[RMDB]
RNA sequence: GGGAACGACUCGAGUAGAGUCGAAAAAAAUUAUGGUCGCCGGCACGUAUGUGCACACCGAGAAUGACACUCUUUCGCCGUCAACCGUGUCGGUAGUCUUGCUCAUCAGGAAUCCGUCUGCGUUGAAUCUAGUAUUUUAGUUCGCUAAAAUACUAGAAAAAGAAACAACAACAACAAC
Reactivity to DMS in 0.01 (KOAc 150mM, MgCl2 10mM, bicine 150mM(pH8.5), 24C), signal-to-noise 6, nucleotides 027 to 126: a050a060a070u010u000a050u010g000g010u000c040g030c040c020g010g000c010a020c030g000u000a060u000g020u000g020c040a080c110a070c180c070g000a050g010a080a080u000g020a100c130a130c080u000c060u000u000u010c110g010c040c040g000u010c060a060a050c170c030g010u010g020u000c020g000g010u000a040g010u000c030u000u000g010c060u000c060a070u010c040a050g000g000a070a070u000c040c020g010u010c020u000g010c090g010u010u000g000a090a140